Structure probing data (2A3) for a 207-nucleotide construct. The RNA was probed in 150 mM KOAc, 10 mM MgCl2 and 150 mM bicine (pH 8.5) at 24 C. For 2A3, 639 sequencing reads were counted.

[RMDB]
RNA sequence: GGGAACGACUCGAGUAGAGUCGAAAAGAGGUCUUCUGCCCUAGCCCGGUCUUCGAAGCUUCCUUUGGCUACUACCCGGUGGAAACAACUGAAGCUUCAACGCCUUUUUUUCCUAUCUUCUUUAGCACCGGGCUAGGGAGUAAGCCCGUGGAACCUUGCAAUGGUAUAUCUUCGGAUAUACCAUUGCAAAAGAAACAACAACAACAAC
Reactivity to 2A3 in 0.01 (KOAc 150mM, MgCl2 10mM, bicine 150mM(pH8.5), 24C), signal-to-noise 2, nucleotides 027 to 156: g120a030g000g010u120c040u070u000c010u120g280c000c010c000u040a000g010c020c020c000g020g000u150c090u230u170c120g010a000a010g000c000u020u010c000c040u010u010u000g040g000c020u010a000c010u120a060c000c000c000g030g000u010g000g070a180a240a080c010a000a010c030u030g010a000a000g000c000u040u020c010a030a020c030g100c000c040u080u030u050u020u030u130u190c160c030u250a300u140c120u220u110c030u170u270u150a030g030c050a020c010c000g000g000g000c000u000a000g000g010g000a000g000u020a000a000g000c000c000c000g010u020g040g080a020a020c000c000u000u000